[RMDB]
RNA sequence: GGGAACGACUCGAGUAGAGUCGAAAAGAUAUGGACUUCUCGUAAGACUAUGAAGUCGGAAACGAUGGAGUCUCGACGAGAGAGUCCUAAGUCAAAACCCGAUGUACAGUUCGCUGUACAUCGGGAACGUUCCUGUUAUGUUCGCAUAACAGGAACGAAAAGAAACAACAACAACAAC
Reactivity to 2A3 in 0.01 (KOAc 150mM, MgCl2 10mM, bicine 150mM(pH8.5), 24C), signal-to-noise 1, nucleotides 027 to 126: g020a030u080a060u100g000g000a000c000u020u000c000u010c000g000u020a030a000g000a000c010u030a180u300g060a070a020g020u000c010g010g010a090a080a020c000g000a010u030g000g040a020g010u000c000u000c030g100a010c000g020a000g010a030g040a000g030u000c000c010u010a150a020g070u020c040a020a020a130a260c000c010c020g030a000u010g010u000a000c010a030g000u020u230c200g050c150u000g000u010a000c000a000u000c000g000g000g010a000a000
Reactivity to DMS in 0.01 (KOAc 150mM, MgCl2 10mM, bicine 150mM(pH8.5), 24C), signal-to-noise 2, nucleotides 027 to 126: g010a050u000a300u000g000g020a010c000u000u000c000u000c000g010u000a260a020g010a000c000u000a280u020g000a130a120g000u000c000g000g000a080a120a140c000g000a000u000g010g000a010g030u000c000u000c120g010a010c000g000a020g000a070g000a010g040u000c000c000u000a020a040g010u010c030a100a110a050a110c000c000c020g000a010u000g000u010a000c000a020g000u010u020c270g050c010u000g020u000a010c000a000u010c000g020g000g010a000a000
Background: Chemical mapping of a 177-nucleotide RNA with 2A3 and DMS. Conditions: 150 mM KOAc, 10 mM MgCl2 and 150 mM bicine (pH 8.5), 24 C. Source: RMDB library TTRDEL, as collected in RNAgym. For 2A3 the reverse transcriptase was SuperScript II with manganese. For DMS, 1,876 sequencing reads were counted.